RNA sequence: GGGAACGACUCGAGUAGAGUCGAAAAUCUUGCAUCGGGUUGGCUCAUCCUGAGACCGGGGAGCUUCGACGAUCUCUUGUCUCUCCUGAAGGAGGAAGGAGCUCUCGAACGCUCUCCCGACCGCUCGUACGCUCUAUGUUCGCAUAGAGCAAAAGAAACAACAACAACAAC
Reactivity to 2A3 in 0.01 (KOAc 150mM, MgCl2 10mM, bicine 150mM(pH8.5), 24C), signal-to-noise 9, nucleotides 027 to 129: u050c010u020u080g050c030a070u030c010g050g000g000u060u160g090g000c020u010c030a090u070c020c050u090g070a030g030a060c040c000g000g000g000g000a000g000c000u000u000c010g010a040c150g010a010u000c000u000c000u050u080g280u110c040u030c010u030c150c030u190g220a290a170g020g000a000g000g000a000a010g010g000a000g000c010u000c000u000c000g000a010a020c100g000c000u000c040u070c010c000c000g000a010c000c020g020c010u020c020g040u050a050c120
Reactivity to DMS in 0.01 (KOAc 150mM, MgCl2 10mM, bicine 150mM(pH8.5), 24C), signal-to-noise 9, nucleotides 027 to 129: u030c050u020u020g020c080a050u020c000g000g000g000u040u060g000g000c020u020c040a070u000c020c050u020g020a100g010a100c150c000g050g020g000g010a000g040c030u020u020c000g000a000c210g010a000u000c000u010c040u020u060g100u050c040u050c020u020c010c030u000g100a190a220g020g000a000g030g000a120a010g000g000a010g020c060u000c020u000c000g020a000a000c130g000c020u020c030u050c020c000c020g020a220c040c040g030c020u000c050g030u080a050c160